RNA sequence: GGGAACGACUCGAGUAGAGUCGAAAAACCAGCUAAAGUAGCAUGCAAUGUCCUUCCUGUUCCCAUGCAGCUGGCCGAGGCUUCUCUUCCCUCUGCUCAAAUCCGAUUUGUAUUUCUUCCUUGUUAAGUUACUAUAGACCUUCGGGUCUAUAGUAACAAAAGAAACAACAACAACAAC
Reactivity to DMS in 0.01 (KOAc 150mM, MgCl2 10mM, bicine 150mM(pH8.5), 24C), signal-to-noise 2, nucleotides 027 to 126: a130c010c010a110g010c070u000a070a090a100g000u000a050g030c020a050u010g000c040a090a060u000g020u000c020c010u000u010c020c000u010g020u000u000c010c020c010a150u000g000c070a090g010c040u000g000g000c030c050g000a120g010g020c020u010u000c020u000c020u000u010c020c000c010u010c020u000g000c040u000c050a050a090a080u010c040c030g000a110u000u010u000g020u000a100u000u000u010c070u010u000c010c040u010u010g010u000u000a080a140
The record gives the reactivity of an RNA of 177 nucleotides to DMS. High DMS reactivity at an A or C suggests that its Watson-Crick edge is free. For DMS, 2,320 sequencing reads were counted. For DMS the reverse transcriptase was MarathonRT. Conditions: 150 mM KOAc, 10 mM MgCl2 and 150 mM bicine (pH 8.5), 24 C.